An RNA of 177 nucleotides, treated with DMS and 2A3 and read out base by base. 2A3 adducts were read by reverse transcription with SuperScript II with manganese. Source: RMDB library OK2TRN, as collected in RNAgym. DMS adducts were read by reverse transcription with MarathonRT. Conditions: 150 mM KOAc, 10 mM MgCl2 and 150 mM bicine (pH 8.5), 24 C.
[RMDB]
RNA sequence: GGGAACGACUCGAGUAGAGUCGAAAACGCGAUGAUCGUCGCUAGCGCACGUACUGCUACGAUCCGACACGCGUACGAUCUCGGCCCUAGAGGCGCUAGUGAUCGUACGCUAUAGCGCACGCGCGGCGUACGGCUAUAUCUUCGGAUAUAGCCGUACAAAAGAAACAACAACAACAAC
Reactivity to DMS in 0.01 (KOAc 150mM, MgCl2 10mM, bicine 150mM(pH8.5), 24C), signal-to-noise 6, nucleotides 027 to 126: c110g010c010g010a110u010g010a040u000c030g010u000c040g020c010u000a110g010c030g020c050a090c060g000u010a130c110u010g010c030u000a030c040g000a030u010c020c180g010a110c200a100c200g010c000g000u000a010c010g000a010u000c000u000c040g010g000c000c000c030u000a140g000a160g010g020c130g010c060u000a060g020u010g000a010u010c010g000u000a000c010g010c000u000a010u000a040g010c040g010c070a060c060g010c030g000c010g010g020c140
Reactivity to 2A3 in 0.01 (KOAc 150mM, MgCl2 10mM, bicine 150mM(pH8.5), 24C), signal-to-noise 7, nucleotides 027 to 126: c040g010c020g040a110u110g020a030u050c020g020u010c020g000c080u100a040g030c030g020c040a060c100g070u170a070c060u090g020c000u010a010c020g040a030u020c030c060g090a050c040a010c130g000c010g000u000a000c000g000a000u020c010u010c000g030g020c010c020c000u170a200g090a300g120g000c100g010c150u120a090g020u010g080a010u010c000g000u000a000c010g000c000u010a020u030a010g010c030g010c000a030c050g030c000g000c030g060g010c040